[RMDB]
RNA sequence: GGGAACGACUCGAGUAGAGUCGAAAAGAUAUGGAGCAAGCGCUGUUUAAAGCUUAUACAUCGGAAACGAUGUGAUUAAUAAACUGCGUGAUGACCUCCUAAGUCAAAACGCGACUUCGGUCGCGAAGUAUUUAACCCUCUUCGGAGGGUUAAAUACAAAAGAAACAACAACAACAAC
Reactivity to 2A3 in 0.01 (KOAc 150mM, MgCl2 10mM, bicine 150mM(pH8.5), 24C), signal-to-noise 1, nucleotides 027 to 126: g010a020u100a040u090g040g030a000g020c040a230a080g000c020g000c000u010g010u000u040u060a090a090a000g040c020u090u130a090u040a180c000a000u010c000g010g070a070a020a040c030g010a020u010g030u020g000a000u110u120a040a080u030a030a020a010c010u000g010c000g020u030g140a300u160g040a060c010c000u020c000c000u030a150a000g090u010c020a000a020a120a110c030g010c000g030a000c000u030u060c290g130g000u010c010g000c000g010a040a000
Reactivity to DMS in 0.01 (KOAc 150mM, MgCl2 10mM, bicine 150mM(pH8.5), 24C), signal-to-noise 3, nucleotides 027 to 126: g000a020u010a300u010g000g000a000g020c050a070a220g010c010g020c010u010g010u000u000u000a010a070a200g000c180u000u000a080u010a020c000a020u000c010g000g000a100a090a240c010g020a010u000g030u000g010a060u000u000a060a170u000a000a000a000c000u000g030c000g020u010g020a080u030g010a140c300c010u000c000c010u000a060a140g000u000c040a080a090a090a180c010g030c010g000a010c000u000u010c200g010g000u000c000g010c010g000a000a070